[RMDB]
RNA sequence: GGGAACGACUCGAGUAGAGUCGAAAACGGAUGGAGUCUCCAAGUUAGCAGUCAGCAUGCGAAAGAGUGGAAGUGUUCUUGCAAGAGGUUCCAAAACAUUUUAUAGCCCAAGAACAGCGAUUUCACAAUGCUCCUAAUAUUUCGAUAUUAGGAGCAUAAAAGAAACAACAACAACAAC
Reactivity to DMS in 0.01 (KOAc 150mM, MgCl2 10mM, bicine 150mM(pH8.5), 24C), signal-to-noise 8, nucleotides 027 to 126: c080g010g010a160u000g010g010a080g010u000c030u000c020c080a070a130g010u000u000a110g010c030a050g010u010c080a080g010c050a070u000g000c060g010a100a090a090g010a080g030u000g000g010a040a080g010u000g000u000u000c020u000u010g010c140a090a110g000a080g010g000u010u000c040c040a050a050a080a080c110a060u010u000u000u010a120u010a130g000c040c060c010a050a060g000a040a050c080a060g010c100g010a120u000u000u000c030a070c120a130
Reactivity to 2A3 in 0.01 (KOAc 150mM, MgCl2 10mM, bicine 150mM(pH8.5), 24C), signal-to-noise 3, nucleotides 027 to 126: c020g020g020a020u060g010g020a020g040u010c010u000c040c000a040a040g070u110u090a020g000c020a000g010u060c020a020g040c020a060u050g000c000g080a100a040a030g110a030g010u040g000g050a080a060g030u010g000u070u010c030u010u030g000c020a070a060g020a030g070g000u000u020c030c000a000a060a030a040c060a040u110u100u040u070a170u170a040g010c000c000c010a000a010g050a030a010c020a030g050c020g150a120u090u080u060c030a000c000a020